[RMDB]
RNA sequence: GGGAACGACUCGAGUAGAGUCGAAAAGCGUGAUUAGGGAUAAUUAUUAAUCUGUAACCCCGCGAAUAGAACAGGGCCCAAUUAUUAAGCGGGGCCCAUGGACGAAUUUUAAGUCCACACACGCGAAAUGCAUGCAUAUAUUCGUAUAUGCAUGCAUAAAAGAAACAACAACAACAAC
Reactivity to DMS in 0.01 (KOAc 150mM, MgCl2 10mM, bicine 150mM(pH8.5), 24C), signal-to-noise 5, nucleotides 027 to 126: g000c010g020u000g010a170u000u010a120g010g000g000a040u000a050a030u000u000a040u010u000a100a060u000c020u010g000u000a170a230c010c000c010c000g020c020g010a080a050u000a040g010a090a150c190a080g000g010g000c010c010c020a100a090u000u000a040u000u010a070a160g020c020g000g000g010g010c030c100c180a020u010g000g000a010c240g040a040a070u000u000u000u000a020a170g010u000c000c000a050c110a040c010a010c010g000c000g000a050a090
Reactivity to 2A3 in 0.01 (KOAc 150mM, MgCl2 10mM, bicine 150mM(pH8.5), 24C), signal-to-noise 1, nucleotides 027 to 126: g000c000g000u000g030a190u060u220a100g050g000g000a020u050a140a010u070u120a030u050u060a050a060u050c020u020g150u080a050a060c000c000c010c000g000c010g030a050a060u080a090g110a130a090c090a150g050g040g000c020c000c010a040a050u100u070a030u030u090a140a050g010c000g000g000g000g000c020c030c000a000u010g010g010a000c000g000a020a030u030u100u120u050a170a000g010u000c000c000a010c020a000c000a000c010g040c000g020a160a130